RNA sequence: GGGAACGACUCGAGUAGAGUCGAAAAUAUGUGCAUGAAGUGAUGGUUUGGGUAACCAUUUCAUCUUUUCAUGUCAUAUAUCUCCUGCCUCUCACGGUUUCAUCUGUGAGAAGCUUCAAAGAACUGCCCUCAAAUCCCCAUUCGUGGGGAUUUGAGGAAAAGAAACAACAACAACAAC
Reactivity to 2A3 in 0.01 (KOAc 150mM, MgCl2 10mM, bicine 150mM(pH8.5), 24C), signal-to-noise 2, nucleotides 027 to 126: u010a000u000g060u070g000c000a000u000g000a010a000g040u020g020a000u000g000g030u000u000u000g000g020g050u060a050a120c000c000a010u010u020u000c000a020u000c000u010u190u010u000c000a000u000g020u010c000a000u000a000u010a000u000c030u010c010c010u020g000c010c000u010c000u000c000a020c010g000g040u080u300u280c130a300u060c050u010g010u010g000a000g000a000a000g000c000u130u110c120a130a150a030g070a100a060c070u080g050c020